[RMDB]
RNA sequence: GGGAACGACUCGAGUAGAGUCGAAAACAAUUCUUAAAAGCCGACCGUCUCAAAACAGGGUGAAGAGAGCAGCGGAAGAGAGAGACGCUUGGAUGGCAGCAGCAGGCCUGAGCAACAGCUGACAGCAGAGUCUAGGUGAAUUCGUUCACCUAGACUCAAAAGAAACAACAACAACAAC
Reactivity to 2A3 in 0.01 (KOAc 150mM, MgCl2 10mM, bicine 150mM(pH8.5), 24C), signal-to-noise 3, nucleotides 027 to 126: c020a020a090u140u060c040u060u240a100a090a030a010g020c000c020g030a050c000c000g060u050c040u030c040a080a200a080a080c040a050g070g010g030u100g070a110a010g080a020g010a000g030c030a020g050c020g090g040a140a000g020a000g000a000g000a010g010a020c020g010c050u030u050g060g050a080u050g040g000c030a040g010c000a000g020c010a010g080g020c000c020u040g030a030g000c010a000a040c000a060g020c020u060g060a060c010a010g070c040a040
Reactivity to DMS in 0.01 (KOAc 150mM, MgCl2 10mM, bicine 150mM(pH8.5), 24C), signal-to-noise 1, nucleotides 027 to 126: c080a010a300u020u030c060u000u050a070a080a160a250g010c060c020g020a090c020c030g010u000c000u000c010a000a040a060a100c060a160g000g040g000u020g040a090a060g010a110g000a090g000c010a060g030c050g020g000a060a040g010a040g000a030g020a030g000a080c040g000c080u000u000g000g030a000u000g010g000c040a030g030c060a010g020c290a110g010g020c030c060u000g010a120g000c020a120a060c180a130g050c010u000g000a070c170a090g050c050a130